[RMDB]
An RNA of 177 nucleotides, treated with DMS and 2A3 and read out base by base.
For 2A3 the reverse transcriptase was SuperScript II with manganese.
The RNA was probed in 150 mM KOAc, 10 mM MgCl2 and 150 mM bicine (pH 8.5) at 24 C.
It was measured as part of the RMDB library M2PK50.
The DMS profile rests on 5,162 reads.
RNA sequence: GGGAACGACUCGAGUAGAGUCGAAAACCCACGACUUUCGAGUCGUGGGAAAUAUAAUCAGCGGUAAAUAAUUAGCUGCGCUUACCGCUGAAGCGGAGCAUACACGUCUAGGAUUCGUCCUAGACAAUCCCUAAUAGUUCUUCGGAACUAUUAGGGAAAAAGAAACAACAACAACAAC
Reactivity to DMS in 0.01 (KOAc 150mM, MgCl2 10mM, bicine 150mM(pH8.5), 24C), signal-to-noise 4, nucleotides 027 to 126: c020c000c000a010c000g000a030c000u000u000u010c140g020a010g030u000c000g030u010g000g000g000a000a020a040u010a080u000a140a130u010c010a000g030c000g010g000u010a030a040a050u000a050a090u000u000a120g020c040u000g000c070g010c060u000u000a040c010c000g010c000u000g010a000a020g000c040g010g000a070g010c040a170u010a110c200a090c190g000u000c000u000a000g000g000a020u000u010c210g010u000c000c000u000a010g000a000c000a040a050
Reactivity to 2A3 in 0.01 (KOAc 150mM, MgCl2 10mM, bicine 150mM(pH8.5), 24C), signal-to-noise 4, nucleotides 027 to 126: c000c000c000a000c010g000a000c000u060u110u180c210g120a000g010u000c000g010u000g000g010g010a010a100a000u190a010u030a030a150u010c000a000g000c010g070g200u150a040a090a110u080a060a100u200u150a060g060c060u100g090c060g000c030u000u050a120c000c020g000c000u010g000a000a000g020c030g020g110a010g000c020a020u080a160c090a000c170g000u010c000u000a000g010g010a010u030u040c180g040u030c060c010u020a000g000a000c000a000a000